[RMDB]
Conditions: 150 mM KOAc, 10 mM MgCl2 and 150 mM bicine (pH 8.5), 24 C. Structure probing data (2A3 and DMS) for a 177-nucleotide construct. DMS adducts were read by reverse transcription with MarathonRT.

RNA sequence: GGGAACGACUCGAGUAGAGUCGAAAAUCAGCACUUUUCUUUCAUUAGGGGGAAGGCGUGAGGAAAGUACCAAACAGCAGCGGAGUUUUAAACUUUAAAUAGACAGGUCUGAGUGCCUGAACUUGCCAGGUAGGGACUAUUUCGAUAGUCCCUACCUAAAAGAAACAACAACAACAAC
Reactivity to 2A3 in 0.01 (KOAc 150mM, MgCl2 10mM, bicine 150mM(pH8.5), 24C), signal-to-noise 1, nucleotides 027 to 126: u060c010a000g030c060a100c060u020u000u080u010c000u000u260u160c070a060u030u170a170g000g070g000g000g000a010a010g000g030c060g030u030g030a020g040g040a140a150a120g030u000a020c000c080a140a000a000c050a000g010c000a000g000c000g020g000a040g000u000u000u080u140a030a080a020c000u080u030u070a120a230a050u130a060g060a030c000a000g000g120u050c060u130g130a030g120u130g050c000c000u000g000a000a000c000u070u070g050c020c030
Reactivity to DMS in 0.01 (KOAc 150mM, MgCl2 10mM, bicine 150mM(pH8.5), 24C), signal-to-noise 1, nucleotides 027 to 126: u000c130a190g000c010a020c000u020u000u000u000c000u020u000u010c110a210u010u010a040g010g000g050g050g000a000a000g000g000c120g000u010g000a040g000g000a150a040a000g010u000a090c130c150a020a140a140c150a020g000c000a070g010c090g060g000a060g000u000u000u050u000a000a060a120c060u040u000u000a040a000a080u020a020g000a170c000a010g000g010u020c080u090g000a020g000u060g050c010c040u010g000a010a060c020u000u060g000c190c060